About this RNA
Source: RMDB library M2PK50, as collected in RNAgym. Chemical mapping of a 177-nucleotide RNA with DMS and 2A3. Values cover nucleotides 27 to 126. The DMS profile rests on 4,125 reads. The 2A3 profile rests on 4,009 reads.
RNA sequence: GGGAACGACUCGAGUAGAGUCGAAAACGUGCCAUGUUCGCAUGGCACGAAAUAAAGGAAACAGGAAGGCAUCGGCGCACGUUGUAACAAGCGCAAAAUAAAAAACAUUUCACUUCGGUGAAAUGAACUGCAUAAUUAACUUCGGUUAAUUAUGCAGAAAAGAAACAACAACAACAAC
Reactivity to DMS in 0.01 (KOAc 150mM, MgCl2 10mM, bicine 150mM(pH8.5), 24C), signal-to-noise 4, nucleotides 027 to 126: c020g020u000g000c010c000a010u010g020u000u010c210g040c010a010u010g020g010c010a000c000g010a030a060a040u010a050a090a120g010g020a040a090a080c080a040g010g010a060a040g000g010c020a040u000c090g010g020c030g020c050a070c170g000u000u010g010u010a090a060c120a090a150g010c050g010c080a080a010a060a070u040a030a030a050a070a050a120c010a010u000u000u000c000a010c000u010u010c110g040g020u000g000a000a010a000u000g000a030a100
Reactivity to 2A3 in 0.01 (KOAc 150mM, MgCl2 10mM, bicine 150mM(pH8.5), 24C), signal-to-noise 2, nucleotides 027 to 126: c010g010u000g000c000c000a010u000g010u020u050c220g000c170a000u010g000g000c010a000c000g000a000a000a010u130a010a050a010g120g010a110a100a040c060a050g080g020a030a010g040g000c010a040u120c120g050g000c030g000c000a040c070g010u020u060g040u050a080a100c070a140a010g000c010g000c040a000a050a080a000u130a020a050a010a000a000a010c000a000u020u010u010c000a000c010u010u070c230g140g020u010g000a000a000a000u000g010a030a030